[RMDB]
RNA sequence: GGGAACGACUCGAGUAGAGUCGAAAAUUUUAUUUUCAUCAUCAUUUCUGGAUUAUUGAAUUAUGAGUGUUUUAGCAGUCAUUUCAAAGCGAUGUUUUAUCACUGAUAACAUCUUUAUAUCCAACAAGUCCUAUUUAUGGUUCGCCAUAAAUAGGACAAAAGAAACAACAACAACAAC
Reactivity to DMS in 0.01 (KOAc 150mM, MgCl2 10mM, bicine 150mM(pH8.5), 24C), signal-to-noise 2, nucleotides 027 to 126: u010u010u010u010a050u000u020u000u000c020a160u000c080a110u010c130a110u010u020u010c100u020g000g020a050u000u000a060u000u000g000a040a140u000u000a020u010g010a020g010u010g030u000u010u020u010a080g000c010a010g010u010c010a040u000u000u010c170a030a050a120g050c210g010a030u000g000u000u000u010u000a040u000c040a080c110u010g000a010u000a000a010c070a040u000c000u010u000u000a040u010a020u000c000c010a050a120c220a090a070
Reactivity to 2A3 in 0.01 (KOAc 150mM, MgCl2 10mM, bicine 150mM(pH8.5), 24C), signal-to-noise 1, nucleotides 027 to 126: u070u030u010u080a020u010u050u090u060c020a080u040c000a010u020c020a030u030u060u150c090u060g010g010a010u020u030a020u030u090g040a000a010u040u090a020u060g060a030g050u020g020u040u080u020u040a010g020c020a020g140u060c010a020u000u100u140c100a050a050a000g040c030g010a010u000g000u010u110u040u100a060u040c020a050c130u050g020a000u000a020a010c030a020u000c000u060u000u000a140u010a000u010c020c000a010a010c010a150a050
Source: RMDB library OK2TST, as collected in RNAgym. The record gives the reactivity of an RNA of 177 nucleotides to DMS and 2A3. The DMS profile rests on 1,834 reads. For DMS the reverse transcriptase was MarathonRT.